RNA sequence: GGGAACGACUCGAGUAGAGUCGAAAAACUAGCCGUACGCGGCUAGAAUUGACUUUCAAGAAUUAGGUUGUAGUUUUGGUUUAAACCUAUUCCUUAGAAAGUUCAAAGAUCAUGUACGCAUGAUCAAUAUAGCCACCACUUUCGAGUGGUGGCUAUAAAAAGAAACAACAACAACAAC
Reactivity to DMS in 0.01 (KOAc 150mM, MgCl2 10mM, bicine 150mM(pH8.5), 24C), signal-to-noise 1, nucleotides 027 to 126: a140c000u000a000g000c000c000g010u040a140c300g050c010g030g000c000u000a000g000a060a070u000u010g010a060c000u000u000u000c000a000a110g000a000a000u020u000a000g000g000u000u000g010u020a090g000u030u040u020u020g040g000u080u020u020a090a000a000c000c000u000a000u000u000c030c020u000u010a060g030a000a000a000g010u020u000c080a080a100a130g040a000u010c000a030u000g000u030a230c230g020c000a000u000g000a010u000c000a050a140
Reactivity to 2A3 in 0.01 (KOAc 150mM, MgCl2 10mM, bicine 150mM(pH8.5), 24C), signal-to-noise 3, nucleotides 027 to 126: a000c000u000a000g000c010c010g070u040a020c270g000c000g060g000c000u000a000g000a000a030u020u050g000a000c000u010u020u010c000a000a000g030a090a010u140u110a060g020g050u050u060g130u110a150g170u160u080u170u300g300g040u180u140u160a060a050a000c000c000u000a000u010u030c030c030u000u000a050g000a020a000a000g010u080u010c060a040a050a000g000a000u000c000a030u000g030u030a070c140g000c080a000u020g020a000u010c000a040a000